The record gives the reactivity of an RNA of 177 nucleotides to 2A3 and DMS.
2A3 adducts were read by reverse transcription with SuperScript II with manganese.
2A3 is a SHAPE reagent: it acylates the 2'-hydroxyl of flexible nucleotides of all four kinds.
The RNA was probed in 150 mM KOAc, 10 mM MgCl2 and 150 mM bicine (pH 8.5) at 24 C.
For DMS, 1,088 sequencing reads were counted.
RNA sequence: GGGAACGACUCGAGUAGAGUCGAAAACAUGAUGGCUCAGUGGUGACUGCAGGGUGGAGGAGAGGCAUGUGACUGUCCCAGCUGACCUCCACACGCUGAAAGCCUCAUGGUCACGUGCAGCCCACCAGUCAGUAAUCGUCUUCGGACGAUUACUGACAAAAGAAACAACAACAACAAC
Reactivity to 2A3 in 0.01 (KOAc 150mM, MgCl2 10mM, bicine 150mM(pH8.5), 24C), signal-to-noise 2, nucleotides 027 to 126: c010a020u070g090a080u080g090g000c010u020c200a000g030u000g000g080u080g050a080c060u060g000c060a120g010g080g000u030g010g010a010g030g010a180g000a030g080g030c050a110u120g040u060g120a080c140u180g100u160c000c040c000a010g030c030u060g020a000c010c020u000c000c000a000c000a000c000g060c000u050g020a210a070a000g000c000c000u040c020a120u040g030g000u010c000a000c020g000u070g020c030a030g050c010c030c000a010c020c010a020
Reactivity to DMS in 0.01 (KOAc 150mM, MgCl2 10mM, bicine 150mM(pH8.5), 24C), signal-to-noise 2, nucleotides 027 to 126: c090a000u000g010a110u000g050g070c040u000c120a040g010u010g010g030u000g010a250c050u010g050c050a080g000g010g010u000g020g000a070g000g000a120g000a160g000g000c000a020u000g000u020g050a070c170u010g000u000c000c000c000a150g000c070u000g010a300c020c010u000c000c000a000c000a040c030g000c000u000g000a050a130a160g030c000c000u000c050a070u010g020g000u000c010a030c050g000u000g000c020a150g010c040c030c030a090c210c150a130